Chemical mapping of a 177-nucleotide RNA with DMS and 2A3. The 2A3 profile rests on 3,199 reads. 2A3 adducts were read by reverse transcription with SuperScript II with manganese. Reactivities are given for positions 27 through 126. Reactivities are rounded to 0.1 and cut off at 0 and 3.
[RMDB]
RNA sequence: GGGAACGACUCGAGUAGAGUCGAAAAUUGGAAGAUGCCAGCGAAUGCAGCGAUCUUCUUAAGCUAUAUAAAAAUGUCGCUGUAAAACAUGUGUUUAGCCAUCCAGAUGUCGAGCGGCUUGAAUUGCACUUACUCUGUGGUUCGCCACAGAGUAAGUAAAAGAAACAACAACAACAAC
Reactivity to DMS in 0.01 (KOAc 150mM, MgCl2 10mM, bicine 150mM(pH8.5), 24C), signal-to-noise 4, nucleotides 027 to 126: u000u000g010g010a020a060g000a060u000g030c030c030a190g000c040g010a130a090u000g020c020a100g030c010g020a180u000c110u000u000c010u000u010a050a120g020c110u020a050u020a100u010a020a030a060a040a040u000g020u000c030g010c010u000g010u000a040a090a090a040c060a030u010g000u010g010u010u000u000a100g010c060c080a080u000c090c020a070g000a050u000g010u000c060g000a070g030c030g010g010c040u000u010g010a080a100u010u000g020c180
Reactivity to 2A3 in 0.01 (KOAc 150mM, MgCl2 10mM, bicine 150mM(pH8.5), 24C), signal-to-noise 3, nucleotides 027 to 126: u110u070g020g010a010a000g030a030u060g140c070c040a070g050c080g130a230a080u240g000c050a030g000c030g040a040u000c000u030u000c020u010u020a020a000g010c040u020a010u040a030u100a300a130a060a040a060u080g000u000c010g000c020u000g070u140a030a050a050a000c020a020u120g030u010g060u190u090u110a030g030c020c010a020u030c000c010a050g030a190u050g040u060c070g050a000g010c050g050g000c000u040u050g050a090a070u100u090g030c030